Structure probing data (2A3 and DMS) for a 207-nucleotide construct.
For DMS the reverse transcriptase was MarathonRT.
For 2A3 the reverse transcriptase was SuperScript II with manganese.
The DMS profile rests on 5,142 reads.
RNA sequence: GGGAACGACUCGAGUAGAGUCGAAAAGGCAUCUUACAUAUGUGAAUCAUAGAGCAGACCCUGCCAGUAGUGGGCUGUUGCCUCCUGGAAACUGAAGGCUGUGAAUGCCAAUUUUCAGCCUCCUGGAGACCUGGCAGUUUUGGGGGAAGACCCCAGGUCCACUACCUAAUUUCGAUUAGGUAGUGGAAAAAGAAACAACAACAACAAC
Reactivity to 2A3 in 0.01 (KOAc 150mM, MgCl2 10mM, bicine 150mM(pH8.5), 24C), signal-to-noise 3, nucleotides 027 to 156: g040g000c000a080u010c040u190u150a090c050a100u230a080u150g070u070g170a130a040u200c030a080u120a140g020a020g070c020a020g020a140c000c010c020u020g000c020c010a030g010u130a050g020u140g070g010g010c040u070g110u160u070g020c000c000u020c000c000u040g020g030a110a130a060c050u100g050a080a010g020g000c010u050g030u070g130a050a030u140g090c040c060a100a120u040u040u010u010c010a000g000c000c000u020c000c020u030g000g010a030g020a050c010c020u010g000g000c000a010g020u070u060u140u080g000g000g000g010g010a080a000g090a050c000c000c000c000a010g010g000
Reactivity to DMS in 0.01 (KOAc 150mM, MgCl2 10mM, bicine 150mM(pH8.5), 24C), signal-to-noise 2, nucleotides 027 to 156: g020g000c030a150u010c050u000u000a040c020a110u000a040u000g020u000g020a150a160u000c030a060u000a030g010a180g010c020a050g000a090c040c030c040u010g000c040c040a110g000u010a120g050u000g040g010g020c020u000g010u000u000g010c000c020u000c000c020u010g000g000a070a040a100c020u010g020a020a140g000g010c010u000g010u010g010a110a130u000g000c050c090a080a000u000u000u000u000c000a020g000c020c040u010c010c010u010g020g030a060g010a220c020c080u010g030g000c010a090g020u000u000u000u000g020g000g000g030g020a080a150g010a130c000c020c000c000a020g000g000